[RMDB]
RNA sequence: GGGAACGACUCGAGUAGAGUCGAAAAGCUGAGCGGCGGCGCCGUGUCGAUUGCGCGCUGCGCUGCCACCGGCGCUACGCUUGUCUCCGGGCCGACGAUCACGAGCGGCGUCGUGUCCGUGCAGUGCGCGCAGUGGAUGCUUCGGCAUCCACUGCGCAAAAGAAACAACAACAACAAC
Reactivity to 2A3 in 0.01 (KOAc 150mM, MgCl2 10mM, bicine 150mM(pH8.5), 24C), signal-to-noise 1, nucleotides 027 to 126: g060c040u100g030a000g050c010g060g070c030g000g000c050g000c000c080g010u030g050u060c100g160a250u000u300g040c080g000c040g180c140u090g080c000g010c000u000g000c000c000a020c000c000g000g030c000g060c000u010a010c020g060c000u040u060g020u030c030u000c060c030g000g000g000c030c000g030a000c000g050a150u120c040a060c190g020a000g050c090g030g040c000g050u000c010g010u060g050u070c000c080g010u020g040c050a000g020u050g010c030